Source information
Chemical mapping of a 177-nucleotide RNA with 2A3 and DMS. For DMS the reverse transcriptase was MarathonRT. The data come from the RNA Mapping Database (RMDB), library OK1LIB.
[RMDB]
RNA sequence: GGGAACGACUCGAGUAGAGUCGAAAAGAAGGGAAAGGAGAGCCAUGGACAGUCUCCAGAGGUUCCUAAGGCCUCGGUCGCGCCUGCAGGGAGGCAGAAUGUCCCGGUUGUCCAUGUAAGAAGAAGAGCAUAUGGAUGAUUUCGAUCAUCCAUAUGCAAAAGAAACAACAACAACAAC
Reactivity to 2A3 in 0.01 (KOAc 150mM, MgCl2 10mM, bicine 150mM(pH8.5), 24C), signal-to-noise 6, nucleotides 027 to 126: g050a030a020g050g030g010a090a080a060g070g020a050g000a020g020c000c020a050u040g010g000a010c020a020g040u020c010u000c010c050a030g020a010g000g010u120u170c040c010u070a070a070g050g000c000c010u010c020g020g030u070c040g000c040g030c040c020u060g020c030a060g040g060g010a010g000g010c020a010g090a100a060u110g030u020c000c000c010g020g000u010u010g030u030c010c020a010u050g040u120a040a100g050a070a010g070a030a000g060a050
Reactivity to DMS in 0.01 (KOAc 150mM, MgCl2 10mM, bicine 150mM(pH8.5), 24C), signal-to-noise 6, nucleotides 027 to 126: g010a090a060g000g000g010a070a090a090g010g020a050g000a080g030c090c030a090u000g000g010a030c020a090g000u000c040u000c010c020a090g010a060g000g010u000u000c030c080u020a120a150g000g000c020c000u030c050g040g010u020c070g000c170g000c020c030u010g030c110a160g010g000g010a030g000g000c030a120g010a080a080u000g010u000c000c000c190g000g000u010u000g010u000c000c050a050u010g000u040a080a100g000a090a060g020a090a060g000a200

The DMS profile rests on 12,744 reads.